[RMDB]
RNA sequence: GGGAACGACUCGAGUAGAGUCGAAAAUCAAAUAUAAAAGCUGAGAUGAGCUCAGCAAGGGUAUUUUUCGAGAGAAGAGCUCUCGUUCCCUAUCCCUUGCUCCGGAAACGGUAGCUUUUACAAAAAACACUUAUAUUGGUUUCGACCAAUAUAAGUGAAAAGAAACAACAACAACAAC
Reactivity to 2A3 in 0.01 (KOAc 150mM, MgCl2 10mM, bicine 150mM(pH8.5), 24C), signal-to-noise 2, nucleotides 027 to 126: u050c010a020a060a010u260a010u020a100a050a000a030g010c000u030g010a020g000a170u200g180a040g140c010u000c030a000g040c010a000a000g000g020g000u030a030u010u090u000u020u020c000g000a000g030a000g040a300a120g040a170g300c000u010c000u010c010g010u010u000c000c000c010u020a040u080c020c000c000u000u000g000c000u000c000c000g020g020a090a060a020c020g000g010u040a010g000c000u000u020u050u050a030c070a040a160a010a020a020a010
Reactivity to DMS in 0.01 (KOAc 150mM, MgCl2 10mM, bicine 150mM(pH8.5), 24C), signal-to-noise 2, nucleotides 027 to 126: u010c120a090a090a100u000a150u010a040a020a010a070g010c000u010g000a000g000a300u010g010a200g000c020u000c000a000g030c000a020a010g020g010g000u000a070u000u000u000u000u000c000g010a010g000a010g000a220a180g040a160g000c010u000c000u000c000g000u000u000c000c000c010u000a300u000c010c000c000u000u000g000c010u000c000c000g000g000a100a040a140c010g000g000u000a020g000c010u000u000u000u000a030c110a000a050a120a120a050a150